[RMDB]
An RNA of 177 nucleotides, treated with 2A3 and DMS and read out base by base. The 2A3 profile rests on 1,404 reads. It was measured as part of the RMDB library RFM100. The reactions ran in a buffer of 150 mM KOAc, 10 mM MgCl2 and 150 mM bicine (pH 8.5), at 24 C.

RNA sequence: GGGAACGACUCGAGUAGAGUCGAAAAAGCCCGUCCAAGCGUCGAAGCCCCCGGAGAUCCGUAAUGGAGAGAAGGGGGUGAAGGCGUGAUGGCGUAAGCCGGCCGACUCCUGGGGCCCGUGAAAAGGGCCGUCCAGUAACUUCGGUUACUGGACGGCAAAAGAAACAACAACAACAAC
Reactivity to 2A3 in 0.01 (KOAc 150mM, MgCl2 10mM, bicine 150mM(pH8.5), 24C), signal-to-noise 2, nucleotides 027 to 126: a010g030c000c010c000g020u030c000c000a090a040g000c000g030u020c000g070a020a030g010c010c000c000c000c000g000g040a050g050a100u000c000c000g200u300a080a130u300g000g000a010g010a050g020a110a060g020g000g000g020g000u000g000a010a000g010g010c000g000u000g000a040u160g000g000c000g010u020a000a120g000c020c000g050g000c000c020g010a020c000u060c020c000u020g000g000g120g000c000c000c000g010u070g110a070a040a000a030g030g020
Reactivity to DMS in 0.01 (KOAc 150mM, MgCl2 10mM, bicine 150mM(pH8.5), 24C), signal-to-noise 3, nucleotides 027 to 126: a030g000c030c010c000g000u040c000c000a040a300g000c010g030u000c000g010a160a300g000c000c000c010c000c000g000g000a300g010a020u000c030c000g020u030a200a080u030g000g010a020g010a050g000a300a220g000g000g010g060g030u010g010a100a130g020g000c010g000u000g020a110u100g000g000c030g000u020a160a190g010c040c010g000g000c040c030g000a110c020u000c020c020u000g000g000g000g000c000c000c040g070u050g010a070a050a080a120g000g000